[RMDB]
This 177-nucleotide RNA was probed chemically with 2A3 and DMS.
For 2A3 the reverse transcriptase was SuperScript II with manganese.
The reactions ran in a buffer of 150 mM KOAc, 10 mM MgCl2 and 150 mM bicine (pH 8.5), at 24 C.
The 2A3 profile rests on 15,386 reads.
RNA sequence: GGGAACGACUCGAGUAGAGUCGAAAAGGGCGUCAUUUCGAUGACGCCCAUACGUCUACUCCGAUUGGCGAGGACGACGCCGACGGGCGCGUAUGCCAAUCGCACCGUCCAGAUUCGUCUGGACGAAACGUGCAUUGAAUUUCGAUUCAAUGCACGUAAAAGAAACAACAACAACAAC
Reactivity to 2A3 in 0.01 (KOAc 150mM, MgCl2 10mM, bicine 150mM(pH8.5), 24C), signal-to-noise 7, nucleotides 027 to 126: g000g000g000c010g020u010c010a020u040u080u140c210g070a030u010g000a000c000g010c000c010c000a000u010a000c000g020u010c010u010a010c010u000c000c000g020a020u000u010g000g000c070g050a130g260g150a030c030g120a220c000g010c010c010g220a300c210g080g020g000c010g000c000g000u010a030u120g000c000c000a000a000u000c000g010c010a050c040c010g010u000c000c000a010g000a020u020u060c110g070u010c070u000g000g000a000c000g000a000a020
Reactivity to DMS in 0.01 (KOAc 150mM, MgCl2 10mM, bicine 150mM(pH8.5), 24C), signal-to-noise 5, nucleotides 027 to 126: g000g000g010c010g020u000c000a010u000u000u020c200g010a020u000g010a010c010g000c010c000c000a000u000a010c270g010u000c010u000a030c020u000c010c010g000a030u010u000g000g010c010g020a100g000g010a020c010g010a140c010g030c000c000g010a190c300g010g020g020c020g020c000g010u000a100u000g000c030c000a000a000u000c000g020c110a110c180c010g020u000c000c010a000g010a030u000u010c170g000u000c000u000g000g000a010c000g000a010a050